[RMDB]
RNA sequence: GGGAACGACUCGAGUAGAGUCGAAAAAGGAAAAGGUUUUAAGCUUGCAAGGGUGGUAAACUGUGGUGAGGUAAGUGUAUGGGGGAAACAAAAGGAAUAAGGUUUGUUUUCAUAUGUCCAUGUCAGUGCCAACUUUCUGUCUUCUUCAUGGUCAUGAGCCUCAGCUAAUAUUCGUAUUAGCUGAGGCAAAAGAAACAACAACAACAAC
Reactivity to 2A3 in 0.01 (KOAc 150mM, MgCl2 10mM, bicine 150mM(pH8.5), 24C), signal-to-noise 2, nucleotides 027 to 156: a010g120g060a060a090a030a040g010g030u040u080u090u140a060a020g030c020u070u080g020c010a030a060g040g050g000u020g000g020u070a090a080a130c100u060g030u030g040g010u040g020a010g050g010u050a030a050g010u010g020u070a060u050g030g000g000g030g060a010a010a020c060a020a070a000a000g070g030a080a100u100a060a040g000g030u040u080u050g020u000u100u090u000c040a030u060a020u220g000u000c010c000a010u030g040u050c000a010g010u020g070c050c010a050a030c060u050u140u040c010u090g050u010c000u050u030c020u030u050c040a000u020g020g000u030c000a030u060g060a000
Reactivity to DMS in 0.01 (KOAc 150mM, MgCl2 10mM, bicine 150mM(pH8.5), 24C), signal-to-noise 1, nucleotides 027 to 156: a070g000g030a090a090a070a030g010g020u020u010u000u010a130a110g030c040u000u020g040c100a070a110g020g000g100u030g050g000u000a000a040a080c040u020g020u010g000g000u000g050a080g000g010u000a030a060g010u000g020u020a050u010g000g000g040g000g000a070a060a110c010a040a020a060a110g000g010a060a120u010a100a130g010g030u000u000u010g030u000u000u000u000c020a130u000a040u010g000u010c000c000a020u010g030u000c110a110g000u010g030c120c080a030a060c050u000u000u000c040u000g020u000c030u000u000c120u000u000c010a070u000g000g000u000c030a050u000g010a300